[RMDB]
The record gives the reactivity of an RNA of 177 nucleotides to DMS and 2A3.
The 2A3 profile rests on 1,456 reads.
The DMS profile rests on 8,260 reads.
It was measured as part of the RMDB library OK2TRN.
The reactions ran in a buffer of 150 mM KOAc, 10 mM MgCl2 and 150 mM bicine (pH 8.5), at 24 C.

RNA sequence: GGGAACGACUCGAGUAGAGUCGAAAAGGGGCCUUUUCCUCACUUCUGGAAAAUCAGCGGCACCGGGUUGUAGCCGGGAAUCACGCCGAGGUUGUACACGUAGUUGCCGUACUUGUCGCUUAUCGCGACUGGAAUUCGUAUUCGUACGAAUUCCAGUAAAAGAAACAACAACAACAAC
Reactivity to DMS in 0.01 (KOAc 150mM, MgCl2 10mM, bicine 150mM(pH8.5), 24C), signal-to-noise 5, nucleotides 027 to 126: g000g010g000g020c080c020u000u010u010u000c020c000u000c110a090c110u010u000c060u000g000g010a070a050a070a090u010c080a100g010c040g000g000c040a110c030c020g010g000g010u000u020g010u000a140g020c020c010g010g000g000a110a090u010c130a090c180g000c030c020g010a110g010g000u000u000g020u000a060c100a070c100g000u000a070g020u000u000g010c020c030g020u010a070c100u000u000g010u000c010g010c020u000u000a100u010c160g020c030g000
Reactivity to 2A3 in 0.01 (KOAc 150mM, MgCl2 10mM, bicine 150mM(pH8.5), 24C), signal-to-noise 1, nucleotides 027 to 126: g000g000g090g010c010c000u050u080u120u040c010c000u000c030a110c060u120u060c040u090g040g000a080a030a050a110u100c050a050g110c000g000g000c000a000c010c030g060g030g010u160u050g160u130a040g030c020c000g040g000g030a060a110u170c020a050c100g030c020c010g000a020g000g000u080u100g090u060a020c050a010c060g000u030a030g040u040u100g040c040c020g000u030a050c020u030u060g050u060c000g020c010u100u150a160u190c070g000c010g030